[RMDB]
RNA sequence: GGGAACGACUCGAGUAGAGUCGAAAAGAUAUGGACCAGUUAUCGCAGGAGAGGGCUAGCUCAAUCUCGGAAACGAGAUUGAGCUAGCCUACCCACCUCCUGAACUACGAUGGGCUGGUCCUAAGUCCUCGAUAGUUAUGUUCGCAUAACUAUCGAGAAAAGAAACAACAACAACAAC
Reactivity to DMS in 0.01 (KOAc 150mM, MgCl2 10mM, bicine 150mM(pH8.5), 24C), signal-to-noise 1, nucleotides 027 to 126: g010a110u030a280u000g020g020a000c010c010a020g000u000u010a030u010c010g000c000a020g000g000a010g010a080g000g010g000c010u000a000g010c000u000c010a030a010u010c000u000c000g020g030a070a170a270c010g040a050g040a010u020u000g000a020g030c000u000a000g060c000c000u000a000c050c060c180a300c080c000u010c000c010u000g000a100a030c180u020a300c030g000a030u000g040g000g000c000u000g000g010u010c000c010u010a000a120g020u000c070